[RMDB]
RNA sequence: GGGAACGACUCGAGUAGAGUCGAAAAGAUAUGGAGCGACGGUAUCAACGCAUCGAUCUCGGAAACGAGGGAGCGUGUAUUCGCUCCUAAGUCAAAAGUGGAGGUUUACUUCGGUAAACCUCCACAACAAACCUCAGCAGUUCGCUGCUGAGGUUUGAAAAGAAACAACAACAACAAC
Reactivity to DMS in 0.01 (KOAc 150mM, MgCl2 10mM, bicine 150mM(pH8.5), 24C), signal-to-noise 2, nucleotides 027 to 126: g000a050u000a300u000g020g020a030g000c000g040a030c300g000g010u000a070u010c060a090a040c030g040c000a220u020c180g000a020u010c000u000c010g010g000a100a090a060c000g000a060g000g000g000a010g010c000g020u000g000u000a050u000u000c010g010c000u000c000c000u000a000a100g010u000c010a060a070a090a120g000u000g000g000a020g000g000u000u000u000a000c000u000u020c230g020g000u000a000a020a000c000c000u010c000c000a000c000a030a140